Description: The data come from the RNA Mapping Database (RMDB), library OK3TST. This 207-nucleotide RNA was probed chemically with DMS and 2A3. The RNA was probed in 150 mM KOAc, 10 mM MgCl2 and 150 mM bicine (pH 8.5) at 24 C. For DMS the reverse transcriptase was MarathonRT. Values cover nucleotides 27 to 156. For 2A3 the reverse transcriptase was SuperScript II with manganese. The 2A3 profile rests on 2,793 reads.

[RMDB]
RNA sequence: GGGAACGACUCGAGUAGAGUCGAAAAGUUUGCGGCGGUACUCAUUUUCGCUAUCUGCACGGCAGGCUUAUCGCCGGGAGACACCGCAUUAUUAAUCAUCGUCUAUGCCUUAACUAUCUUGUCGGCCAUCCGUGGGUUGCGGUGGUUAUGAUAAAUAGAUUGAAGGCUAAUUCGUUAGCCUUCAAUCAAAAGAAACAACAACAACAAC
Reactivity to DMS in 0.01 (KOAc 150mM, MgCl2 10mM, bicine 150mM(pH8.5), 24C), signal-to-noise 2, nucleotides 027 to 156: g020u000u000u000g030c020g030g030c000g040g000u010a090c060u020c060a180u010u010u010u020c110g050c090u010a100u010c100u010g020c050a100c060g070g030c070a170g000g010c040u000u000a100u000c100g010c020c020g050g040g010a130g000a120c040a060c020c040g000c040a080u010u000a100u010u000a070a100u010c060a060u010c040g010u010c050u010a120u020g000c000c010u000u000a050a120c060u000a070u000c070u000u000g010u010c020g030g000c020c040a070u000c030c030g000u010g030g030g030u000u000g010c040g050g030u000g000g010u000u000a020u000g040a140u020a030a040a120u010a140
Reactivity to 2A3 in 0.01 (KOAc 150mM, MgCl2 10mM, bicine 150mM(pH8.5), 24C), signal-to-noise 5, nucleotides 027 to 156: g050u000u050u080g040c010g000g050c050g010g050u080a130c040u040c120a180u100u060u120u190c040g000c030u050a110u100c080u110g070c060a070c070g070g000c030a040g060g000c040u110u130a090u170c070g000c020c040g030g050g000a020g010a020c040a030c020c010g010c020a000u030u030a070u030u100a090a020u060c020a010u030c020g060u000c070u080a060u140g020c000c000u130u080a130a050c020u070a080u150c090u080u110g080u090c010g000g020c030c000a070u080c000c020g030u070g050g020g030u030u100g010c010g010g010u010g000g000u000u010a060u080g020a000u060a120a140a030u060a070